Annotation
An RNA of 177 nucleotides, treated with DMS and read out base by base. DMS adducts were read by reverse transcription with MarathonRT.
RNA sequence: GGGAACGACUCGAGUAGAGUCGAAAAGAUAUGGAGAGAGGCGACGAUCUGGUCUGUCGGAAACGACAGCCAGGGAGCCUUCCUCCUAAGUCAAAGCAUAUAGGGAGGUUCGCCUCCCUAUAUGCAACUGAAUGUUCGAGUUCGCUCGAACAUUCAGAAAAGAAACAACAACAACAAC
Reactivity to DMS in 0.01 (KOAc 150mM, MgCl2 10mM, bicine 150mM(pH8.5), 24C), signal-to-noise 2, nucleotides 027 to 126: g000a060u000a300u000g000g000a030g000a040g000a020g000g010c010g000a050c300g030a010u010c010u000g000g020u010c020u000g010u000c000g000g010a060a100a150c000g010a030c000a010g000c010c000a000g000g040g020a030g010c000c010u010u000c040c000u000c000c000u010a010a120g010u020c040a100a100a170g010c000a000u000a000u000a010g000g000g010a010g000g050u000u020c220g010c000c000u000c000c000c000u000a000u000a000u000g000c000a020a080